[RMDB]
Background: Structure probing data (2A3) for a 207-nucleotide construct. Values cover nucleotides 27 to 156. The RNA was probed in 150 mM KOAc, 10 mM MgCl2 and 150 mM bicine (pH 8.5) at 24 C.
RNA sequence: GGGAACGACUCGAGUAGAGUCGAAAAAUAUGGAGGCUGACAAGAUCUCUCAUGCCCAUUAGACUGGCUCUUGCUGGAGUGGUCAGCACUCUACCUGAGACAUUUCAGAUAUGGCUCUCCUUAUGCUUCUCUAGCUUGGGAGGACUUACGGGCGGACCUCAGAAGGCUAGUUCGCUAGCCUUCUGAGAAAAGAAACAACAACAACAAC
Reactivity to 2A3 in 0.01 (KOAc 150mM, MgCl2 10mM, bicine 150mM(pH8.5), 24C), signal-to-noise 2, nucleotides 027 to 156: a000u190a110u060g030g000a010g020g000c020u090g100a110c140a110a170g030a240u040c040u000c020u020c040a080u080g010c000c000c000a050u080u170a040g150a090c040u040g020g020c030u050c040u100u130g020c090u090g050g000a020g090u170g060g050u220c030a010g080c030a130c000u030c000u020a080c000c030u030g040a000g000a070c060a070u080u190u060c020a000g030a100u090a080u200g030g010c010u000c010u040c060c000u100u100a110u180g010c010u180u050c100u000c130u220a000g000c000u060u100g000g000g010a010g010g040a000c000u060u070a010c030g000g010g020c000g030g040a030c020